Chemical mapping of a 177-nucleotide RNA with DMS and 2A3.
DMS adducts were read by reverse transcription with MarathonRT.
2A3 adducts were read by reverse transcription with SuperScript II with manganese.
The RNA was probed in 150 mM KOAc, 10 mM MgCl2 and 150 mM bicine (pH 8.5) at 24 C.
Reactivities are given for positions 27 through 126.
It was measured as part of the RMDB library 15KREP.
RNA sequence: GGGAACGACUCGAGUAGAGUCGAAAAUCCGAGGGGACCGUCCCUCGGUAAUGGCGAAUGGGACCCAGAACUCUCUCUAGAUUCCCAGAGAGAAUCGAGAGAAAACUGGCUCUCCCUUAGCCAUCCGGUAUUUAUCUUCCUUCGGGAAGAUAAAUACAAAAGAAACAACAACAACAAC
Reactivity to DMS in 0.01 (KOAc 150mM, MgCl2 10mM, bicine 150mM(pH8.5), 24C), signal-to-noise 2, nucleotides 027 to 126: u000c000c000g010a020g000g010g000g010a110c300c300g000u010c010c000c000u000c000g000g020u000a010a020u010g000g010c000g000a150a100u020g000g000g000a010c280c000c000a020g000a090a270c190u000c020u030c000u000c010u010a200g020a020u000u020c000c000c090a170g000a150g010a130g020a010a020u020c030g000a010g000a000g000a020a020a110a170c000u000g010g000c020u000c040u000c000c000c010u000u000a200g000c000c000a030u010c020c030g030
Reactivity to 2A3 in 0.01 (KOAc 150mM, MgCl2 10mM, bicine 150mM(pH8.5), 24C), signal-to-noise 1, nucleotides 027 to 126: u040c000c000g000a000g050g010g020g030a100c090c040g280u220c010c010c010u010c000g000g000u010a030a020u010g010g000c000g030a020a010u020g000g010g010a020c040c000c000a010g020a070a020c010u000c000u030c000u020c040u100a080g010a030u000u060c010c030c190a060g050a010g010a010g000a110a000u010c010g010a000g000a000g000a010a020a010a030c000u010g010g000c010u000c000u030c000c000c000u000u010a020g000c000c000a000u030c010c020g030